An RNA of 177 nucleotides, treated with DMS and read out base by base. The data come from the RNA Mapping Database (RMDB), library OK2TRN. The DMS profile rests on 931 reads.
RNA sequence: GGGAACGACUCGAGUAGAGUCGAAAAGAUUUACGGCGGGAAACGCGCCGAGGUCACGGAUGCGGCACCGACCGAAAGGCGCGGAAAGGUCCCGUGUGCGGCACCGACCGAAACCGCCGGAAAGAAAGCGUGCUAUAGGAUUCGUCCUAUAGCACGCAAAAGAAACAACAACAACAAC
Reactivity to DMS in 0.01 (KOAc 150mM, MgCl2 10mM, bicine 150mM(pH8.5), 24C), signal-to-noise 2, nucleotides 027 to 126: g010a160u000u000u000a050c010g020g000c010g020g010g030a050a110a170c010g030c030g000c000c010g010a200g020g020u000c030a080c170g040g010a140u000g020c100g000g020c040a160c040c020g010a010c000c020g010a070a140a220g000g000c000g010c040g000g000a000a120a300g010g010u000c030c100c070g010u010g020u000g000c110g020g010c120a030c020c120g000a030c000c030g000a050a070a110c000c020g000c000c010g030g000a000a040a030g000a100a100a140